[RMDB]
The data come from the RNA Mapping Database (RMDB), library ARCHII. An RNA of 207 nucleotides, treated with DMS and 2A3 and read out base by base. The RNA was probed in 150 mM KOAc, 10 mM MgCl2 and 150 mM bicine (pH 8.5) at 24 C. DMS adducts were read by reverse transcription with MarathonRT. Values cover nucleotides 27 to 156.
RNA sequence: GGGAACGACUCGAGUAGAGUCGAAAAGUAGCGAGGCGAGGACCCCAUCUUACCUCGUUAAAAAUGGUGGGAAAAGAUAACUGCCAACGAAAACUACGCUUUAGCUGCUUAAUAACGCAGCUACGUCCUGACGGAAGCUUGCCCGGGGCUUCUGUCGCACAGUAUCAUUGUUCGCAAUGAUACUGUGAAAAGAAACAACAACAACAAC
Reactivity to DMS in 0.01 (KOAc 150mM, MgCl2 10mM, bicine 150mM(pH8.5), 24C), signal-to-noise 2, nucleotides 027 to 156: g040u000a050g020c020g030a050g010g030c030g000a090g000g000a300c060c070c050c020a080u020c020u000u010a070c010c050u010c050g020u020u000a030a090a090a040a080u010g030g040u010g000g000g000a130a070a060a140g010a100u000a050a130c020u000g010c010c010a060a190c000g000a110a040a030a070c010u000a070c040g000c060u000u000u000a020g000c010u000g010c030u000u010a090a140u020a080a120c150g000c000a010g030c000u000a010c060g030u010c030c030u000g020a030c000g040g020a010a010g010c030u000u000g030c020c000c030g000g020g020g050c010u000u000c000u000g030u000c030g080
Reactivity to 2A3 in 0.01 (KOAc 150mM, MgCl2 10mM, bicine 150mM(pH8.5), 24C), signal-to-noise 4, nucleotides 027 to 156: g090u060a000g020c020g020a020g050g040c020g010a010g000g020a060c020c010c000c010a020u000c000u010u080a040c000c010u000c030g030u030u020a010a030a000a020a020u230g000g000u010g010g050g040a040a070a030a030g090a030u120a040a070c060u110g040c050c050a070a030c090g110a030a030a060a060c070u150a030c030g030c020u080u090u070a010g000c000u010g020c010u090u050a120a030u180a280a020c100g000c010a000g020c010u010a020c030g040u050c010c040u030g000a000c000g010g020a000a000g000c000u030u040g000c010c000c000g000g000g010g000c000u000u000c000u000g000u000c000g000